[RMDB]
RNA sequence: GGGAACGACUCGAGUAGAGUCGAAAACCUCCAGAGGACCCCUUCAGCGAACAGAGGAGUCUCUACCUCGGAGGAGAAAGACCGUAGCGAUGGGGGAGAUGCUAGGAGUAGGCGGCGACCGAAGCGACACUUGCUAAUAGUUCGCUAUUAGCAAGUGAAAAGAAACAACAACAACAAC
Reactivity to DMS in 0.01 (KOAc 150mM, MgCl2 10mM, bicine 150mM(pH8.5), 24C), signal-to-noise 2, nucleotides 027 to 126: c030c010u000c050c040a110g020a110g000g000a130c020c010c010c000u000u000c110a110g000c020g000a060a070c070a220g010a070g020g010a100g030u000c070u020c060u000a210c100c030u010c100g040g020a140g000g010a130g000a050a060a100g000a090c020c010g020u000a090g020c060g010a050u010g000g000g000g010g020a080g010a100u010g000c040u000a060g000g010a090g010u000a070g030g030c030g030g010c050g020a110c030c030g010a070a080g010c060g000a180
Reactivity to 2A3 in 0.01 (KOAc 150mM, MgCl2 10mM, bicine 150mM(pH8.5), 24C), signal-to-noise 1, nucleotides 027 to 126: c000c000u010c030c030a070g010a060g030g050a100c020c000c000c020u020u050c050a060g000c020g090a070a040c010a080g040a020g080g000a030g040u000c040u010c020u130a130c010c030u010c030g030g000a020g030g010a050g050a010a070a000g100a000c000c020g050u060a020g040c040g020a030u060g020g000g010g070g000a000g000a000u060g030c010u030a020g030g020a040g030u050a040g030g020c020g020g010c010g020a040c000c000g040a040a010g010c010g020a000
The data come from the RNA Mapping Database (RMDB), library 15KREP. Structure probing data (DMS and 2A3) for a 177-nucleotide construct. Conditions: 150 mM KOAc, 10 mM MgCl2 and 150 mM bicine (pH 8.5), 24 C. Reactivities are rounded to 0.1 and cut off at 0 and 3. For DMS, 1,425 sequencing reads were counted.